[RMDB]
RNA sequence: GGGAACGACUCGAGUAGAGUCGAAAAUGGAUGAGCGUCUUAAAGUGGAGCAGCAUGCGUUUGAGCGUGGAUUUUAUCUGCCCAACCAGGCACUGCCCAAUAUCCACGACUCGCCAAAAUCGAUGAGUGACUUUGCAGUAUUCGUACUGCAAAGUCAAAAAGAAACAACAACAACAAC
Reactivity to 2A3 in 0.01 (KOAc 150mM, MgCl2 10mM, bicine 150mM(pH8.5), 24C), signal-to-noise 2, nucleotides 027 to 126: u100g030g010a020u040g010a020g010c050g060u030c060u040u140a110a100a040g040u030g050g000a160g000c010a000g020c010a000u060g020c030g130u070u090u230g060a070g000c030g000u020g020g040a060u150u040u040u130a080u030c020u030g000c000c000c000a040a060c040c010a000g010g000c020a000c040u070g000c030c020c000a060a060u070a050u060c030c010a000c050g090a180c050u010c030g030c020c020a020a040a000a100u180c100g050a120u140g080a040g130
Reactivity to DMS in 0.01 (KOAc 150mM, MgCl2 10mM, bicine 150mM(pH8.5), 24C), signal-to-noise 3, nucleotides 027 to 126: u000g020g000a040u010g010a050g010c030g010u000c080u010u020a040a100a130g020u000g030g000a160g010c010a030g010c040a020u000g010c020g010u000u000u000g010a080g010c030g040u000g010g010a020u000u000u010u010a090u010c060u000g000c000c010c020a030a100c240c180a080g000g010c020a050c050u000g010c030c020c060a040a050u000a080u000c080c100a010c010g030a090c020u000c010g030c050c040a050a050a090a080u020c090g000a140u010g010a170g010
Chemical mapping of a 177-nucleotide RNA with 2A3 and DMS. Source: RMDB library OK2TRN, as collected in RNAgym. For 2A3 the reverse transcriptase was SuperScript II with manganese.